RNA sequence: GGGAACGACUCGAGUAGAGUCGAAAAGCUUCAAUAGGGACCAGGAAUAAGGACAAGUUACGGGAUGGGAAAUACCGGCAGGUCCAGUGCCAGCGUUCCUGAUCCAAAGGCUGGUCCGCACUAGCAAAAAUAAAAUAUAAUUCGUUAUAUUUUAUUUAAAAGAAACAACAACAACAAC
Reactivity to 2A3 in 0.01 (KOAc 150mM, MgCl2 10mM, bicine 150mM(pH8.5), 24C), signal-to-noise 2, nucleotides 027 to 126: g030c020u150u090c150a080a160u120a270g030g020g000a010c000c000a000g010g050a080a080u170a210a080g040g000a030c020a030a110g030u070u070a060c080g030g010g040a060u090g050g000g120a070a110a020u140a070c010c000g030g010c020a010g030g060u000c000c010a010g000u030g060c000c010a070g020c110g040u010u020c010c010u040g040a090u030c000c000a040a000a000g070g020c020u000g000g000u000c000c030g070c070a070c060u060a010g040c010a050a120
Reactivity to DMS in 0.01 (KOAc 150mM, MgCl2 10mM, bicine 150mM(pH8.5), 24C), signal-to-noise 2, nucleotides 027 to 126: g000c060u000u040c080a090a170u030a100g000g000g000a020c010c020a010g000g000a060a060u020a070a150g000g000a010c050a060a110g020u020u040a080c090g000g020g010a070u000g000g020g000a110a090a080u010a100c030c050g010g010c040a080g010g010u000c060c050a120g020u000g000c040c090a080g020c200g000u000u010c000c000u000g000a070u010c000c020a090a110a090g010g000c010u000g000g000u010c010c040g040c130a080c130u000a030g010c040a020a050